[RMDB]
Record summary
This 207-nucleotide RNA was probed chemically with 2A3 and DMS. Values cover nucleotides 27 to 156. The reactions ran in a buffer of 150 mM KOAc, 10 mM MgCl2 and 150 mM bicine (pH 8.5), at 24 C. It was measured as part of the RMDB library RNAMAK.

RNA sequence: GGGAACGACUCGAGUAGAGUCGAAAAUGAUGGGAUUCGUCCCAUCAAAAAAAUCCUAAGUCAACUACCGGGAGAUCGAUAAGUAUCGGAAACGAUACUUUUGACGAUCGAAGAACGAUGUUGAUAUGGAAAAAACCGUAGUAUUCGUACUACGGAACAUCCCUAAAUUCUUCGGAAUUUAGGGAUGAAAAGAAACAACAACAACAAC
Reactivity to 2A3 in 0.01 (KOAc 150mM, MgCl2 10mM, bicine 150mM(pH8.5), 24C), signal-to-noise 1, nucleotides 027 to 156: u120g000a000u000g000g000g020a000u070u120c170g030u020c010c000c000a010u000c010a000a030a040a000a010a000a010u030c030c000u060a160a030g010u000c000a000a010c010u060a070c040c000g000g000g010a030g020a010u000c010g030a010u010a090a010g000u000a000u010c010g030g000a080a040a030c000g000a000u000a000c000u010u030u000u010g090a060c000g000a000u000c000g000a020a010g000a000a010c000g010a000u010g000u020u000g010a010u000a090u190g040g020a050a070a010a160a020a050c000c010g010u000a000g010u000a010u080u110c290g010u090a000c020u000a000c000g000g000a010a010
Reactivity to DMS in 0.01 (KOAc 150mM, MgCl2 10mM, bicine 150mM(pH8.5), 24C), signal-to-noise 1, nucleotides 027 to 156: u000g000a020u000g010g100g050a040u000u030c300g020u000c000c000c010a040u000c000a000a010a010a080a070a060a120u000c010c010u000a040a240g030u000c020a020a000c030u000a030c040c030g000g000g020a280g030a040u000c000g010a090u000a000a000g040u000a000u020c000g010g050a170a120a280c000g000a010u000a000c000u010u020u000u000g020a280c130g000a000u000c000g060a070a120g030a170a130c030g100a050u020g000u000u000g010a020u010a300u000g000g000a010a060a090a120a090a080c000c000g020u000a030g000u000a030u010u000c250g000u000a020c020u000a000c000g020g000a050a030